The data come from the RNA Mapping Database (RMDB), library RNAMAK. Chemical mapping of a 207-nucleotide RNA with 2A3 and DMS. The RNA was probed in 150 mM KOAc, 10 mM MgCl2 and 150 mM bicine (pH 8.5) at 24 C.
RNA sequence: GGGAACGACUCGAGUAGAGUCGAAAAGGGGUCGGAGAUUAGUUUCGGCAACGUCGACGAUCUAUACUGAAGCCUCCACGGUAUAGGGAGACGUUGAUCGAAACGACGAUCUCCGACGGAGGCACCCAAAACGUAUCUAAGUUCGCUUAGAUACGAACGUUUCUAAUAGUUUCGACUAUUAGAAACGAAAAGAAACAACAACAACAAC
Reactivity to 2A3 in 0.01 (KOAc 150mM, MgCl2 10mM, bicine 150mM(pH8.5), 24C), signal-to-noise 4, nucleotides 027 to 156: g050g020g030g020u010c000g030g000a010g000a040u060u170a130g020u000u000u010c010g010g000c000a000a000c000g000u000c000g010a300c000g000a040u000c000u000a000u000a000c000u020g060a100a030g010c000c000u010c000c010a010c000g000g010u000a000u010a000g000g000g000a000g000a000c000g000u000u010g090a200u070c000g000a010a000a000c000g030a090c080g020a000u000c000u000c000c000g000a000c010g000g000a000g010g000c010a020c010c000c000a040a090a010a010c010g000u000a000u000c000u000a000a010g020u050u120c190g140c150u000u000a000g000a010u000a000c000g010a070a030
Reactivity to DMS in 0.01 (KOAc 150mM, MgCl2 10mM, bicine 150mM(pH8.5), 24C), signal-to-noise 1, nucleotides 027 to 156: g010g010g040g020u000c020g020g030a060g010a030u000u010a120g040u000u000u010c000g030g000c000a010a020c020g050u010c040g000a080c230g000a080u000c000u000a020u010a030c010u010g020a020a110g000c030c000u000c000c020a300c030g000g050u010a000u000a020g000g010g000a020g020a020c000g030u010u010g000a050u000c030g000a030a050a010c000g030a060c100g000a030u010c010u000c010c000g000a000c000g000g020a040g050g040c010a180c060c010c010a080a080a120a180c020g030u000a010u000c000u000a020a020g030u010u010c300g010c000u000u010a000g000a000u010a010c010g020a040a070